[RMDB]
RNA sequence: GGGAACGACUCGAGUAGAGUCGAAAAUAAUGAAGAAAAAGCUGCUGAAGGAAUCCGCGCAGCCCUCGCAAGUGGAUCACGUUCCAACGCUGUGUUCGUAUCUGCAACAGCAUGAAUGCGCGGCAUCCUCUAUGGUUUCGUUCGCGAAACCAUAGAGAAAAGAAACAACAACAACAAC
Reactivity to 2A3 in 0.01 (KOAc 150mM, MgCl2 10mM, bicine 150mM(pH8.5), 24C), signal-to-noise 2, nucleotides 027 to 126: u160a010a070u060g030a030a110g090a090a120a110a090a080g060c120u090g000c170u190g170a010a000g060g010a110a160u050c040c010g000c040g000c010a040g020c000c020c030u040c090g060c030a010a180g020u040g000g040a030u020c110a000c050g020u000u020c030c000a080a060c210g040c270u090g010u020g010u200u030c000g000u020a030u040c020u030g000c020a080a020c000a180g000c010a000u100g100a080a030u020g020c020g000c000g000g000c020a060u090c010
Reactivity to DMS in 0.01 (KOAc 150mM, MgCl2 10mM, bicine 150mM(pH8.5), 24C), signal-to-noise 2, nucleotides 027 to 126: u010a100a080u010g000a140a060g020a080a060a080a150a140g000c040u000g010c060u000g030a040a070g020g030a190a110u000c010c010g030c020g000c010a010g020c120c010c070u010c070g040c040a090a150g010u020g020g020a030u000c210a040c030g070u010u000c000c000a120a140c240g000c180u010g060u000g000u000u000c040g000u000a020u000c030u000g000c020a030a150c160a070g010c070a100u000g010a030a080u000g010c000g000c000g000g000c300a020u000c070